[RMDB]
RNA sequence: GGGAACGACUCGAGUAGAGUCGAAAACAUAGGCUCUUCUAAACUGAAGGGUGUCACUGCAGGGUUUGGGAGGUAAGAUGUAAGGGGGGAAGCGAAGACCAUUACAACUGGCAGGAUGAAACCAUCCCUUCAGUAGCGGAUUCGUCCGCUACUGAAGAAAAGAAACAACAACAACAAC
Reactivity to DMS in 0.01 (KOAc 150mM, MgCl2 10mM, bicine 150mM(pH8.5), 24C), signal-to-noise 1, nucleotides 027 to 126: c120a170u010a120g030g000c010u010c000u000u000c050u020a070a030a160c200u000g000a020a050g030g010g010u000g020u000c090a100c160u000g000c070a070g000g000g000u000u000u020g050g010g030a050g000g030u000a030a110g010a070u060g000u010a050a120g000g000g000g010g000g000a030a110g030c070g000a040a060g050a070c030c020a060u000u010a050c110a060a130c160u010g020g000c050a060g000g000a070u010g000a090a130a150c120c100a060u000c050c030